[RMDB]
RNA sequence: GGGAACGACUCGAGUAGAGUCGAAAAAGAGUGGGGGAAAUCUCGCGAGGGAAAUCCCAAGAAGGUCGAGAAGUCUCAAGCUACGAGGGGGGACCCCCGAGACGCUGGAGACGCCCGGGAACAAGGAGUACAGCCGGGUUCGCCCGGCUGAAAAGAAACAACAACAACAAC
Reactivity to 2A3 in 0.01 (KOAc 150mM, MgCl2 10mM, bicine 150mM(pH8.5), 24C), signal-to-noise 1, nucleotides 027 to 129: a000g090a030g030u170g010g000g000g000g000a000a000a040u030c030u000c000g010c040g000a080g000g010g000a000a050a000u020c000c000c000a010a010g020a000a000g030g070u000c020g000a040g010a200a000g030u020c010u010c030a010a000g000c020u000a040c000g000a030g000g000g000g000g010g160a090c030c000c000c000c000g000a040g020a000c040g070c070u060g000g000a010g040a010c080g000c000c020c000g000g000g010a000a000c030a090a020g000g000a010g010u220a050
Reactivity to DMS in 0.01 (KOAc 150mM, MgCl2 10mM, bicine 150mM(pH8.5), 24C), signal-to-noise 1, nucleotides 027 to 129: a050g050a060g050u020g000g050g000g000g010a010a080a140u000c030u010c100g020c190g020a060g050g000g040a040a070a240u010c060c020c000a120a090g000a070a000g070g000u030c000g030a150g020a190a110g000u040c020u010c040a050a080g000c060u040a200c080g020a300g000g000g000g000g000g000a160c110c000c000c040c020g010a190g000a070c230g020c060u010g010g000a050g050a030c090g030c000c000c000g030g000g010a000a000c060a050a100g050g050a130g030u050a110

Chemical mapping of a 170-nucleotide RNA with 2A3 and DMS. As a SHAPE reagent, 2A3 marks flexible, mostly unpaired nucleotides at the ribose 2'-OH. Reactivities are given for positions 27 through 129.